[RMDB]
An RNA of 177 nucleotides, treated with 2A3 and DMS and read out base by base.
Source: RMDB library OK2TST, as collected in RNAgym.
The DMS profile rests on 10,175 reads.
RNA sequence: GGGAACGACUCGAGUAGAGUCGAAAAUUAUCAUACUAUUUUGCUACUACAGCAGCAUUUCUUGACUUCACUUUCUUCGCAGGACUCGGCUUGACUGCCAUCUACUACGAGUCUCCUGCUUUUGUCGCAUGCAUAGAUUGUUCGCAAUCUAUGCAUGAAAAGAAACAACAACAACAAC
Reactivity to 2A3 in 0.01 (KOAc 150mM, MgCl2 10mM, bicine 150mM(pH8.5), 24C), signal-to-noise 4, nucleotides 027 to 126: u090u030a060u120c040a020u050a190c060u130a170u080u140u090u050g020c010u020a110c020u040a060c040a050g030c020a000g020c010a050u040u100u070c040u070u100g040a070c020u050u040c090a050c070u090u130u060c030u100u100c060g020c020a020g000g050a040c010u030c060g020g040c050u060u060g060a080c060u040g050c010c010a040u020c020u050a050c020u060a130c020g010a000g000u000c020u010c010c000u020g030c000u030u040u010u040g090u030c060g000
Reactivity to DMS in 0.01 (KOAc 150mM, MgCl2 10mM, bicine 150mM(pH8.5), 24C), signal-to-noise 7, nucleotides 027 to 126: u010u010a070u010c060a080u000a120c120u000a090u000u000u000u000g000c020u000a100c100u010a100c190a080g020c040a040g000c050a060u000u000u000c050u000u000g010a070c050u000u000c090a050c090u000u010u000c050u000u000c100g010c050a040g000g010a050c060u000c050g020g010c080u000u010g000a100c080u000g010c080c080a160u010c030u010a030c050u010a110c020g000a010g000u000c060u000c010c000u000g010c090u000u000u000u000g010u010c140g010